[RMDB]
RNA sequence: GGGAACGACUCGAGUAGAGUCGAAAACCCUGGUUAUUCGUAACCAGGGGUUGAGUGAAUCCUCUCAGUGCAUCCGUGGAUCACACGAAACGCAUGGACGACAAUUACGGUUAUUCGUAACCGUAAAGUAAUUACGGGAAUUCGUUCCCGUAAUUACAAAAGAAACAACAACAACAAC
Reactivity to 2A3 in 0.01 (KOAc 150mM, MgCl2 10mM, bicine 150mM(pH8.5), 24C), signal-to-noise 7, nucleotides 027 to 126: c000c000c000u000g000g010u010u010a040u050u090c250g020u030a010a000c000c000a000g010g010g010g000u070u220g050a050g030u130g080a090a070u020c010c000u000c020u020c040a040g020u010g040c010a040u030c050c010g010u020g030g070a220u220c060a050c000a000c160g010a070a050a000c050g000c010a020u030g020g020a030c050g010a030c040a070a080u050u000a010c000g000g020u010u000a020u020u080c200g020u030a010a010c000c000g000u000a000a000a030
Reactivity to DMS in 0.01 (KOAc 150mM, MgCl2 10mM, bicine 150mM(pH8.5), 24C), signal-to-noise 9, nucleotides 027 to 126: c000c000c000u000g000g000u000u000a020u000u010c170g020u000a000a010c000c000a010g020g000g000g010u010u000g010a130g000u000g010a140a120u000c010c020u000c130u010c030a080g010u000g010c020a080u000c050c010g010u000g000g000a150u010c260a130c020a020c030g000a030a030a040c060g010c010a020u000g000g000a070c090g010a040c100a090a150u000u000a000c000g000g000u000u000a030u000u010c190g010u000a000a010c000c000g010u000a010a010a090
Source information:
Source: RMDB library M2PK50, as collected in RNAgym. Structure probing data (2A3 and DMS) for a 177-nucleotide construct. For 2A3, 18,118 sequencing reads were counted. 2A3 is a SHAPE reagent: it acylates the 2'-hydroxyl of flexible nucleotides of all four kinds. The reactions ran in a buffer of 150 mM KOAc, 10 mM MgCl2 and 150 mM bicine (pH 8.5), at 24 C.